[RMDB]
Chemical mapping of a 177-nucleotide RNA with DMS and 2A3. Values cover nucleotides 27 to 126. The RNA was probed in 150 mM KOAc, 10 mM MgCl2 and 150 mM bicine (pH 8.5) at 24 C. The data come from the RNA Mapping Database (RMDB), library OK2TRN.
RNA sequence: GGGAACGACUCGAGUAGAGUCGAAAACGUUGAUGGUCUUACUUUGGAUACUCCCCGUGCUGUUUGCAAAUUACUCAAUCGCACUUUCAACAGUGACAAGGAUUUGGAAGAAUAUCGUCUUGCUGUCAGAUGAGUGUCAAUUCGUUGACACUCAUCUAAAAGAAACAACAACAACAAC
Reactivity to DMS in 0.01 (KOAc 150mM, MgCl2 10mM, bicine 150mM(pH8.5), 24C), signal-to-noise 3, nucleotides 027 to 126: c120g020u000u000g020a080u000g020g010u010c040u000u000a080c060u000u000u010g020g000a090u000a090c080u000c020c010c030c090g030u010g020c030u010g000u000u010u000g010c100a040a020a060u010u000a090c110u010c050a050a080u010c110g010c020a040c070u000u000u000c140a050a050c100a010g010u000g010a050c090a070a060g010g010a060u000u020u000g010g020a080a070g010a050a090u000a050u000c050g020u000c070u000u010g020c040u000g010u000c140
Reactivity to 2A3 in 0.01 (KOAc 150mM, MgCl2 10mM, bicine 150mM(pH8.5), 24C), signal-to-noise 1, nucleotides 027 to 126: c050g010u010u140g030a060u070g010g100u000c010u080u130a050c000u000u120u130g000g040a050u110a160c020u070c040c010c000c010g010u070g020c050u040g040u050u140u010g080c030a000a000a220u110u120a130c020u020c060a010a070u040c030g010c040a020c000u000u100u070c020a010a020c030a060g020u020g090a050c010a040a080g040g020a090u060u020u110g080g000a060a050g050a170a000u030a030u110c050g080u020c020u040u060g010c020u010g020u040c000